The data come from the RNA Mapping Database (RMDB), library M2RFPK.
This 207-nucleotide RNA was probed chemically with DMS and 2A3.
Conditions: 150 mM KOAc, 10 mM MgCl2 and 150 mM bicine (pH 8.5), 24 C.

[RMDB]
RNA sequence: GGGAACGACUCGAGUAGAGUCGAAAAUAAGCAAAAGACAACCACCUUUCCCGCUGACAAUAGCGUUAUCCCUCCGCACUUCGGUAAUAUGAGGGCACAGUAAAUCCCGCAAGGAUGAGAAUGUGAUUAAACAGUUACAGCUUCGGCUGUAACUGAAGUUGCACUUAAGGUUCGCCUUAAGUGCAACAAAAGAAACAACAACAACAAC
Reactivity to DMS in 0.01 (KOAc 150mM, MgCl2 10mM, bicine 150mM(pH8.5), 24C), signal-to-noise 2, nucleotides 027 to 156: u000a040a110g030c100a110a090a100a090g020a070c050a130a110c020c000a100c040c030u000u000u000c000c020c020g020c020u000g000a240c090a070a100u000a020g000c020g000u040u020a040u010c010c000c000u000c000c010g000c070a140c110u000u030c070g020g020u000a100a070u000a100u000g020a030g000g070g040c040a130c010a130g030u000a130a060a070u000c030c000c010g030c180a100a150g000g010a050u000g030a150g010a130a170u010g020u010g010a160u010u000a110a110a150c000a000g040u000u010a000c000a000g010c000u000u010c290g110g070c000u000g000u000a010a000c000u000g010a010a010
Reactivity to 2A3 in 0.01 (KOAc 150mM, MgCl2 10mM, bicine 150mM(pH8.5), 24C), signal-to-noise 4, nucleotides 027 to 156: u160a020a010g060c050a080a080a020a020g070a090c060a030a060c050c030a040c020c030u020u040u020c010c000c000g000c040u050g050a040c050a120a200u080a160g020c020g080u070u070a080u100c000c000c000u030c000c010g040c010a050c030u080u100c090g040g020u030a040a020u080a190u280g010a010g010g000g000c010a000c000a000g020u030a000a040a030u000c000c010c010g100c120a040a050g010g000a010u020g000a020g040a040a010u020g010u010g020a010u070u210a090a110a040c000a000g010u000u000a000c000a000g010c000u030u070c110g110g000c000u000g000u000a000a000c000u000g000a010a000
For DMS the reverse transcriptase was MarathonRT.